[RMDB]
RNA sequence: GGGAACGACUCGAGUAGAGUCGAAAAAUGGGGCGUGUACCACAAAUUGAUAGCUCCAGCGCCCAUCGCGGUGAUGCACUUCGGCAAGAAGCGCGCCUGUAUCAUUGAGGAGAAAGAGCGGUUUAUCCUCAGCAGAUGAUUUCGAUCAUCUGCUGAGAAAAGAAACAACAACAACAAC
Reactivity to DMS in 0.01 (KOAc 150mM, MgCl2 10mM, bicine 150mM(pH8.5), 24C), signal-to-noise 3, nucleotides 027 to 126: a110u000g020g010g020g010c010g040u000g020u050a130c090c010a180c190a040a100a110u020u000g000a080u010a150g000c010u000c000c010a110g020c140g000c000c010c030a110u010c040g020c040g000g010u010g010a060u000g020c020a070c080u000u000c080g000g000c100a080a110g000a030a020g020c070g030c070g020c070c120u000g000u000a050u010c030a070u000u000g000a090g010g030a090g000a070a050a060g010a060g010c050g010g010u010u010u000a120u020c090
Reactivity to 2A3 in 0.01 (KOAc 150mM, MgCl2 10mM, bicine 150mM(pH8.5), 24C), signal-to-noise 2, nucleotides 027 to 126: a040u070g000g000g010g000c010g020u110g070u080a060c050c000a070c080a090a120a020u220u230g020a040u090a140g010c010u000c020c020a020g030c000g000c000c000c010a040u100c050g000c050g000g050u020g040a090u060g000c020a020c090u060u090c070g040g000c080a070a070g080a040a010g060c060g000c030g020c030c020u090g010u050a070u090c030a040u030u110g070a090g050g010a010g050a030a110a000g080a020g010c010g020g000u030u150u030a050u050c000